[RMDB]
RNA sequence: GGGAACGACUCGAGUAGAGUCGAAAAGAAUCAAUAAUGGCAAAGUCACCCGAGUCGACGACAACUAUUUGUUAAUUAAUGAAACUUUGCCUGAUGGCUUAGGGUGUUGGAAUCAGCGUAACGUCAAGUACCUAUUAAAUUUCGAUUUAAUAGGUACAAAAGAAACAACAACAACAAC
Reactivity to DMS in 0.01 (KOAc 150mM, MgCl2 10mM, bicine 150mM(pH8.5), 24C), signal-to-noise 9, nucleotides 027 to 126: g010a120a110u010c060a080a080u010a090a080u000g010g010c020a020a030a080g010u000c050a100c030c030c010g010a050g010u000c030g020a100c090g010a030c050a040a070c260u010a140u010u000u000g010u010u000a110a090u010u010a060a080u010g010a090a080a080c050u000u000u000g010c010c000u000g010a080u000g010g000c030u000u000a060g020g000g010u000g010u010u000g000g010a100a070u000c070a050g010c070g000u010a050a070c090g010u000c110a070a120
Reactivity to 2A3 in 0.01 (KOAc 150mM, MgCl2 10mM, bicine 150mM(pH8.5), 24C), signal-to-noise 6, nucleotides 027 to 126: g010a010a060u090c030a010a110u160a160a080u110g030g000c020a030a010a020g030u070c010a040c010c040c010g000a010g030u030c020g020a050c040g020a020c030a030a030c050u120a120u250u070u050g030u050u070a140a150u130u110a060a080u120g070a060a020a020c010u020u020u010g000c000c000u020g010a030u080g010g010c020u040u060a100g050g000g000u060g040u050u070g060g060a060a050u090c020a020g050c010g070u050a010a040c010g040u040c030a030a070

Chemical mapping of a 177-nucleotide RNA with DMS and 2A3.
The DMS profile rests on 25,743 reads.
The 2A3 profile rests on 9,935 reads.
2A3 adducts were read by reverse transcription with SuperScript II with manganese.